[RMDB]
An RNA of 207 nucleotides, treated with 2A3 and DMS and read out base by base. The DMS profile rests on 2,120 reads. For 2A3 the reverse transcriptase was SuperScript II with manganese. The 2A3 profile rests on 962 reads.
RNA sequence: GGGAACGACUCGAGUAGAGUCGAAAAGGAUAAAGUGGAGUCAAAUCCAAACGAGAUCGUGUUGAAGCCGCCGCUUUAGGAUCGAAGCAUUAAAUUGAAUAAAGCUAGUUUUUUGAUGGCGUGUCUGUCCGCAGUCAAUUUACGAAAUUAAAGAUUACCAGUUAAAUUAGUUCGCUAAUUUAACUGGAAAAGAAACAACAACAACAAC
Reactivity to 2A3 in 0.01 (KOAc 150mM, MgCl2 10mM, bicine 150mM(pH8.5), 24C), signal-to-noise 2, nucleotides 027 to 156: g010g000a040u010a090a050a010g090u040g020g030a010g030u040c030a060a000a100u040c020c000a050a060a020c070g000a030g010a040u040c020g000u020g010u110u130g020a030a020g000c000c020g010c010c000g020c000u070u030u020a030g020g030a020u050c050g060a020a000g020c010a010u060u140a120a140a060u230u120g050a080a030u070a060a050a000g030c030u050a020g040u080u020u000u000u060u060g030a040u040g020g000c000g030u060g070u010c070u060g070u050c060c030g010c010a020g020u060c020a020a000u100u000u100a020c000g040a110a000a010u180u160a140a100a010g110a010u070u110a060
Reactivity to DMS in 0.01 (KOAc 150mM, MgCl2 10mM, bicine 150mM(pH8.5), 24C), signal-to-noise 1, nucleotides 027 to 156: g010g000a130u000a030a070a040g030u010g000g010a110g010u000c040a080a100a150u010c030c040a020a050a140c090g020a190g000a060u000c040g030u010g020u000u000g010a020a180g010c070c040g020c110c050g020c010u010u000u010a090g010g000a080u010c040g010a090a110g000c060a110u000u000a050a140a150u000u000g010a080a140u010a020a030a100g020c080u000a200g020u020u000u000u010u020u040g000a060u000g010g040c000g000u020g070u000c080u000g000u000c090c000g000c000a040g000u000c000a000a030u010u000u010a070c030g010a090a050a150u000u000a080a060a160g010a190u000u010a190